[RMDB]
RNA sequence: GGGAACGACUCGAGUAGAGUCGAAAACAGAUCACGUUCGCGUGAUCUGGAAAGAUUUCUCGUAGAGCCACGACAAGUAAAUUAAAGAAAGCUCACUGAGAACCACCCGCGGGUUCGCCCGCGGGAAACUGAUUUAUCAGUUCGCUGAUAAAUCAGUAAAAGAAACAACAACAACAAC
Reactivity to DMS in 0.01 (KOAc 150mM, MgCl2 10mM, bicine 150mM(pH8.5), 24C), signal-to-noise 2, nucleotides 027 to 126: c000a010g010a010u000c000a000c000g030u010u020c130g030c030g030u000g000a000u000c000u000g000g000a060a090a190g000a080u010u000u000c000u000c000g010u000a230g020a030g040c010c060a150c160g000a150c180a060a070g010u000a090a110a190u010u020a040a090a240g000a110a150a200g000c000u000c000a060c090u020g010a040g000a080a070c200c020a180c020c010c000g010c000g030g030g030u000u020c230g000c020c030c000g010c000g000g010g000a000a020
Reactivity to 2A3 in 0.01 (KOAc 150mM, MgCl2 10mM, bicine 150mM(pH8.5), 24C), signal-to-noise 2, nucleotides 027 to 126: c010a000g000a010u000c010a000c000g010u060u050c240g010c010g070u000g000a000u000c020u000g000g000a030a050a000g050a070u040u030u040c010u000c020g010u050a090g000a000g000c010c050a050c070g080a030c130a150a040g090u290a300a170a270u200u110a150a140a030g100a130a110a000g020c010u000c010a000c050u090g000a010g000a030a010c000c000a010c020c000c000g000c040g000g010g010u040u070c110g070c030c010c000g000c000g000g000g000a020a000